[RMDB]
RNA sequence: GGGAACGACUCGAGUAGAGUCGAAAACAUCGCUAGGCGCUAGACGCAGGAUCUGAUCCUCAGUACAGCCAUGUACUAGGCAGUAGCCAUGGUAUCACUAGUCGUCAUGUGAUCCUACUAGGUGAUCGGGUCCGUCAAUCUUCGGAUUGACGGACCCAAAAGAAACAACAACAACAAC
Reactivity to 2A3 in 0.01 (KOAc 150mM, MgCl2 10mM, bicine 150mM(pH8.5), 24C), signal-to-noise 1, nucleotides 027 to 126: c040a000u090c010g000c060u050a110g030g010c000g010c030u020a010g070a150c010g010c100a020g000g040a010u060c020u010g020a080u050c000c000u040c130a000g010u020a000c000a030g010c000c010a160u080g020u020a010c000u000a000g030g060c000a040g020u130a100g020c000c010a100u070g030g000u100a040u130c040a040c060u030a030g070u150c020g090u050c010a060u070g160u100g010a060u040c000c000u110a250c070u100a070g110g000u090g010a040u130c000